[RMDB]
RNA sequence: GGGAACGACUCGAGUAGAGUCGAAAAGAUAUGGACACGCGAGUAGGGAGAAGGUAUUCGGAAACGAAUAACUUCGAGGAUCUACUCGUCCUAAGUCAAAACGUCCAAGGGUUCGCCCUUGGACGAAGUUAUGACUCAUCUUCGGAUGAGUCAUAACAAAAGAAACAACAACAACAAC
Reactivity to DMS in 0.01 (KOAc 150mM, MgCl2 10mM, bicine 150mM(pH8.5), 24C), signal-to-noise 3, nucleotides 027 to 126: g010a080u000a190u020g010g010a060c050a130c300g020c110g010a010g010u000a010g000g000g000a040g000a020a010g000g000u000a010u000u000c000g020g000a070a060a160c010g000a000a000u000a010a020c000u000u000c000g020a060g010g000a020u010c010u000a010c000u000c000g020u000c040c030u000a050a110g010u000c020a060a040a130a170c010g010u000c000c000a010a010g000g010g020u010u010c270g010c000c000c010u000u000g000g000a010c000g020a010a030
Reactivity to 2A3 in 0.01 (KOAc 150mM, MgCl2 10mM, bicine 150mM(pH8.5), 24C), signal-to-noise 3, nucleotides 027 to 126: g030a040u110a040u170g030g000a030c040a020c220g160c090g020a000g000u000a000g020g000g000a040g000a000a010g050g020u010a010u010u000c000g000g000a080a050a050c010g000a000a010u020a020a010c000u030u010c010g030a210g030g000a010u000c010u000a000c000u010c020g010u000c000c010u060a130a010g040u020c040a020a010a110a130c020g000u030c000c000a000a010g090g000g000u030u140c260g200c010c000c000u000u000g000g000a010c010g010a000a010
Source information:
Chemical mapping of a 177-nucleotide RNA with DMS and 2A3. For DMS, 3,450 sequencing reads were counted. DMS adducts were read by reverse transcription with MarathonRT. The data come from the RNA Mapping Database (RMDB), library TTRDEL. For 2A3, 7,880 sequencing reads were counted. In probing experiments dimethyl sulfate is read out at A N1 and C N3, which are open when not base-paired. Reactivities are given for positions 27 through 126.